[RMDB]
RNA sequence: GGGAACGACUCGAGUAGAGUCGAAAAGAUAUGGAAACGAUAACUUCGAUAAGUUCCGGUCGGAAACGACCGAAGAACUUUUGACGAAGGAAGCGUUUCCUAAGUCAAAACAGGUGUUCGCACCUGAUCUACAUAACGAGUUCGCUCGUUAUGUAGAAAAAGAAACAACAACAACAAC
Reactivity to DMS in 0.01 (KOAc 150mM, MgCl2 10mM, bicine 150mM(pH8.5), 24C), signal-to-noise 4, nucleotides 027 to 126: g010a040u010a300u000g000g000a020a000a000c000g010a030u000a200a300c000u000u000c000g020a140u010a040a000g010u000u000c000c020g000g030u000c000g020g000a140a110a190c000g000a010c000c010g020a050a070g010a010a010c000u000u000u020u000g030a200c100g010a030a010g000g010a090a150g000c010g000u000u000u010c000c000u000a030a120g010u010c040a050a060a190a280c020a010g000g010u000g010u000u010c260g040c040a030c000c000u000g010a060
Reactivity to 2A3 in 0.01 (KOAc 150mM, MgCl2 10mM, bicine 150mM(pH8.5), 24C), signal-to-noise 3, nucleotides 027 to 126: g020a000u060a000u150g000g010a000a000a000c000g000a010u070a190a130c010u010u020c020g070a080u030a170a000g000u000u000c020c000g020g000u000c000g000g050a110a040a080c010g000a000c010c010g030a070a040g000a000a000c000u090u070u050u260g170a100c020g010a000a020g020g000a060a110g020c000g000u010u000u000c000c000u010a050a010g040u000c050a020a050a080a180c000a000g000g000u020g070u130u150c270g050c120a010c020c010u000g000a030